[RMDB]
RNA sequence: GGGAACGACUCGAGUAGAGUCGAAAAUCUUGACAGAGCGGGCGAUAGAUCACGUAACGCGUAGACAGGUGAUCGGCACACUGGACGAAGUGAACGAUAUCGACCUGUGACAGUAGUUGAGGUGGAAUCCCUGGUGCUCGUUCGCGAGUACCAGGGAAAAAGAAACAACAACAACAAC
Reactivity to DMS in 0.01 (KOAc 150mM, MgCl2 10mM, bicine 150mM(pH8.5), 24C), signal-to-noise 2, nucleotides 027 to 126: u000c020u000u000g000a060c080a060g000a140g000c030g040g020g000c000g010a120u010a000g000a050u020c050a070c050g040u010a160a110c170g000c100g020u010a210g000a170c050a030g000g000u000g000a100u000c070g000g030c110a070c000a070c020u000g010g000a020c110g000a110a030g050u000g010a090a040c080g010a140u010a010u000c070g010a060c000c000u000g030u000g000a110c260a110g060u020a020g000u010u010g000a050g010g010u010g000g040a140a120
Reactivity to 2A3 in 0.01 (KOAc 150mM, MgCl2 10mM, bicine 150mM(pH8.5), 24C), signal-to-noise 2, nucleotides 027 to 126: u000c000u000u000g000a000c000a050g140a000g020c000g000g040g030c000g010a010u000a110g070a000u040c010a000c110g060u110a200a020c050g010c000g070u090a100g000a100c030a000g000g010u000g020a100u250c060g000g070c040a000c000a000c000u000g020g040a070c030g020a160a020g010u000g000a090a050c000g010a000u030a020u080c100g050a300c020c000u000g000u000g020a050c030a060g130u210a040g000u010u000g000a000g000g070u070g000g020a100a070